[RMDB]
RNA sequence: GGGAACGACUCGAGUAGAGUCGAAAAGUAUAGGGAAUAGAGAGACACCAAAAGGAUUGCCCAGCAGUGGUUGACAGUCCAGCUGAGGGUGGAAGCCUUGCUACCUUGGAGAUAGCUAUUCUAUCAGUAAAAUACCAUCAUUCGUGAUGGUAUUUUAAAAAGAAACAACAACAACAAC
Reactivity to DMS in 0.01 (KOAc 150mM, MgCl2 10mM, bicine 150mM(pH8.5), 24C), signal-to-noise 9, nucleotides 027 to 126: g010u020a080u020a090g010g000g010a060a050u010a040g000a070g000a090g010a170c150a090c030c030a030a040a090a080g000g000a110u020u010g010c030c010c010a070g020c100a060g010u010g000g020u020u020g010a140c140a060g010u010c010c010a090g010c080u010g000a300g000g000g010u000g010g010a080a080g010c010c020u000u000g000c060u010a090c060c070u000u010g000g010a070g000a130u010a050g010c080u010a030u010u010c010u000a070u020c080a140g010
Reactivity to 2A3 in 0.01 (KOAc 150mM, MgCl2 10mM, bicine 150mM(pH8.5), 24C), signal-to-noise 9, nucleotides 027 to 126: g100u090a050u220a170g060g010g030a070a030u090a040g080a010g010a010g040a050c020a030c060c020a060a090a010a030g040g010a040u080u130g010c010c020c010a060g110c030a020g070u050g050g010u100u110g080a090c040a050g090u030c000c010a020g020c030u040g020a060g020g050g010u050g040g030a070a020g030c000c010u020u030g020c040u050a070c020c010u050u060g040g010a100g000a040u060a030g030c030u030a050u080u020c020u020a080u100c020a010g070